Chemical mapping of a 177-nucleotide RNA with 2A3 and DMS. For 2A3 the reverse transcriptase was SuperScript II with manganese. For 2A3, 3,742 sequencing reads were counted. It was measured as part of the RMDB library OK2TST. The DMS profile rests on 6,333 reads.
RNA sequence: GGGAACGACUCGAGUAGAGUCGAAAAAGUAACUUCGGCUGUCAGUGGAAUUUCAUGUUCUUUCGCCCAUUUAACAAGUUCAACAGUUCCUUGUGUUGAAGCAUGACAGAUGUGCAUACGGCCGCCAAGAGUAACAGAGUUUCGACUCUGUUACUCUAAAAGAAACAACAACAACAAC
Reactivity to 2A3 in 0.01 (KOAc 150mM, MgCl2 10mM, bicine 150mM(pH8.5), 24C), signal-to-noise 4, nucleotides 027 to 126: a000g090u050a050a030c020u060u050c040g010g020c020u020g030u050c040a110g060u080g060g030a060a050u110u150u190c100a080u230g030u050u020c000u060u090u050c030g010c020c020c000a020u040u030u020a110a030c040a040a070g060u060u020c010a020a020c010a060g060u150u140c050c000u150u170g080u020g010u060u020g020a040a020g070c050a010u050g050a030c000a040g050a070u020g030u010g030c000a010u030a110c040g020g010c000c010g000c030c010a040
Reactivity to DMS in 0.01 (KOAc 150mM, MgCl2 10mM, bicine 150mM(pH8.5), 24C), signal-to-noise 6, nucleotides 027 to 126: a090g020u010a080a100c090u010u000c040g030g010c030u010g010u000c140a100g020u000g000g010a070a050u010u010u010c120a070u010g010u000u010c020u000u000u010c120g010c020c020c020a070u000u000u000a080a140c090a060a120g010u000u000c040a020a040c060a050g010u010u000c140c120u010u010g020u000g000u000u000g000a040a040g010c070a060u000g010a090c220a050g010a060u000g020u000g000c040a120u010a060c080g010g020c020c020g010c110c070a070